This 177-nucleotide RNA was probed chemically with 2A3. For 2A3 the reverse transcriptase was SuperScript II with manganese.
RNA sequence: GGGAACGACUCGAGUAGAGUCGAAAAGGUAUCUGUGUUUGAUUUACAAAAUCUUCUAAUUCUUGAUGGAGGUGAAAACUGUUAAUUUCAUGUCCAGUAAUGAUGAUAGGCUGCUUCGCUUGAUGCACCUCUGCGGGAAGUUCGCUUCCCGCAGAGGAAAAGAAACAACAACAACAAC
Reactivity to 2A3 in 0.01 (KOAc 150mM, MgCl2 10mM, bicine 150mM(pH8.5), 24C), signal-to-noise 2, nucleotides 027 to 126: g020g030u050a050u000c050u020g080u060g000u190u190u280g070a030u090u060u200a070c010a080a200a000a040u010c000u000u000c000u000a120a240u230u020c010u050u010g000a000u060g080g040a030g150g020u030g020a050a020a020a020c150u120g200u280u110a260a130u070u020u020c000a000u060g110u300c010c010a000g000u130a110a000u150g020a000u080g010a030u000a050g000g040c110u140g040c000u000u090c000g000c000u000u000g000a120u070g040c000a000

The reactions ran in a buffer of 150 mM KOAc, 10 mM MgCl2 and 150 mM bicine (pH 8.5), at 24 C.